[RMDB]
Structure probing data (2A3 and DMS) for a 177-nucleotide construct.
For 2A3 the reverse transcriptase was SuperScript II with manganese.

RNA sequence: GGGAACGACUCGAGUAGAGUCGAAAAGUGCUCUCAAUGACCGAUUGUCUGGCCGCUGAGACACAUAGGGAUUGUGAUUUUAAUAAACCACUCAUUGAGUGGCCACUUACUGAGUAUGAUUUUACUGGCAUGAUGUGUAGUUCGCUACACAUCAUGCAAAAGAAACAACAACAACAAC
Reactivity to 2A3 in 0.01 (KOAc 150mM, MgCl2 10mM, bicine 150mM(pH8.5), 24C), signal-to-noise 1, nucleotides 027 to 126: g000u010g050c050u000c000u000c000a000a000u000g030a050c000c000g120a070u080u140g140u060c090u100g020g060c000c010g010c020u030g020a000g000a030c010a000c000a060u120a090g080g000g010a070u080u040g030u030g000a050u000u050u090u050a100a090u080a030a050a010c010c000a030c010u000c020a230u060u100g030a030g000u020g040g030c010c000a020c000u030u080a050c030u060g020a010g060u040a050u090g110a160u000u070u020u050a040c030u030g030
Reactivity to DMS in 0.01 (KOAc 150mM, MgCl2 10mM, bicine 150mM(pH8.5), 24C), signal-to-noise 1, nucleotides 027 to 126: g010u000g000c170u000c000u000c000a010a010u020g000a060c020c010g010a120u000u000g030u000c070u020g010g000c000c040g010c040u000g000a050g000a070c000a000c050a090u000a140g020g000g040a050u000u000g020u000g010a120u010u000u000u000a040a050u010a040a120a180c010c010a000c000u000c030a120u000u000g000a040g010u000g000g000c090c050a050c110u000u000a090c100u000g010a120g030u000a030u020g000a130u010u000u010u000a070c040u000g020
For 2A3, 798 sequencing reads were counted.